The data come from the RNA Mapping Database (RMDB), library TTRDEL. An RNA of 177 nucleotides, treated with 2A3 and DMS and read out base by base. The 2A3 profile rests on 2,347 reads. For DMS the reverse transcriptase was MarathonRT. For DMS, 1,187 sequencing reads were counted. The RNA was probed in 150 mM KOAc, 10 mM MgCl2 and 150 mM bicine (pH 8.5) at 24 C.
[RMDB]
RNA sequence: GGGAACGACUCGAGUAGAGUCGAAAAGAUAUGGACCUUGUGAAGGUAUUCUGCGUUGAAAUCGGAAACGAUGGAGCAGAUACUGGAGGCAAGGUCCUAAGUCAAAAGGGUGAGUUCGCUCACCCAACUCCGAUACAAUCUUCGGAUUGUAUCGGAGAAAAGAAACAACAACAACAAC
Reactivity to 2A3 in 0.01 (KOAc 150mM, MgCl2 10mM, bicine 150mM(pH8.5), 24C), signal-to-noise 2, nucleotides 027 to 126: g000a000u090a080u150g030g000a000c010c000u050u060g130u110g110a070a020g020g020u000a050u300u180c000u000g030c000g220u300u000g040a020a030a000u020c000g000g060a020a050a040c010g000a000u000g040g010a000g000c000a000g000a000u000a000c000u020g000g030a050g090g190c020a000a000g060g000u000c010c000u010a000a000g020u000c000a000a020a000a040g000g010g000u020g010a010g040u100u300c300g040c160u000c010a000c030c010c000a000a000
Reactivity to DMS in 0.01 (KOAc 150mM, MgCl2 10mM, bicine 150mM(pH8.5), 24C), signal-to-noise 2, nucleotides 027 to 126: g020a000u010a300u020g020g010a010c000c000u010u000g010u000g010a300a260g000g000u010a000u010u020c010u020g010c000g000u010u020g000a020a110a020u000c000g010g000a110a100a220c010g000a010u010g000g010a100g020c000a000g010a000u000a020c000u000g000g020a300g000g000c000a000a010g000g030u000c000c000u000a000a060g000u000c050a020a050a150a110g000g000g020u000g010a000g020u000u030c260g000c000u000c000a010c000c010c010a060a010